Annotation:
Conditions: 150 mM KOAc, 10 mM MgCl2 and 150 mM bicine (pH 8.5), 24 C. The record gives the reactivity of an RNA of 207 nucleotides to 2A3. 2A3 adducts were read by reverse transcription with SuperScript II with manganese. For 2A3, 784 sequencing reads were counted. Values are in units of 0.01, from 0 to 300, in steps of 10.
[RMDB]
RNA sequence: GGGAACGACUCGAGUAGAGUCGAAAACACACUUCCCGGGAAGUGUGGCCUAACCCCGGUUAGGGACAGCUCCAGGCACAGCUAGCAGGAAGAGACUGGGAGCACUGACUGGCGGGAUGGAUCGUAUGAUCAGCUGCCAGACAGAUCUAGCGUGCAAACCUAGCUAUGCUUUCGAGCAUAGCUAGGUAAAAGAAACAACAACAACAAC
Reactivity to 2A3 in 0.01 (KOAc 150mM, MgCl2 10mM, bicine 150mM(pH8.5), 24C), signal-to-noise 1, nucleotides 027 to 156: c010a000c000a000c020u060u070c070c080c010g040g300g000a000a000g030u000g000u000g010g000c000c000u010a030a030c050c020c000c060g110g010u030u100a060g010g020g030a000c020a050g000c000u000c000c000a060g140g000c010a020c020a000g000c000u020a000g010c020a000g020g050a100a060g040a050g040a120c000u000g000g000g000a000g000c000a020c020u000g000a010c000u000g000g000c010g000g030g060a010u060g190g010a000u000c020g100u300a130u300g000a000u010c000a000g030c000u010g000c000c000a020g000a020c010a000g010a010u020c000u000a000g000c000g010u010g000c020a080a080